[RMDB]
RNA sequence: GGGAACGACUCGAGUAGAGUCGAAAACAUUGUUCUGAUCAUCUGAAGAUCAGCUAUUAGAAGAGAAAGAUCAGUUAAGUCCUUUGGACCUGAUCAGCUUGAUACAAGAACUACUGAUUUUAACUUCAAAACGGGUGCUACUUCGGUAGCACCCGAACUCAGUGGUUAGGUUCGCCUAACCACUGAGAAAAGAAACAACAACAACAAC
Reactivity to 2A3 in 0.01 (KOAc 150mM, MgCl2 10mM, bicine 150mM(pH8.5), 24C), signal-to-noise 2, nucleotides 027 to 156: c020a010u100u230g030u160u140c000u000g020a000u000c010a060u020c090u260g100a170a060g020a070u000c000a000g010c010u070a160u300u220a100g000a040a000g050a010g080a070a090a000g000a000u020c000a000g000u130u120a190a010g000u000c010c010u090u100u250g030g040a030c060c030u020g040a070u040c020a000g060c030u040u090g040a040u090a120c040a030a050g020a080a020c040u070a010c010u090g030a050u140u000u000u000a020a070c000u000u030c010a000a060a080a120c000g000g000g000u000g030c000u000a000c000u030u040c150g130g000u000a000g000c000a000c000c000c010g000a010a000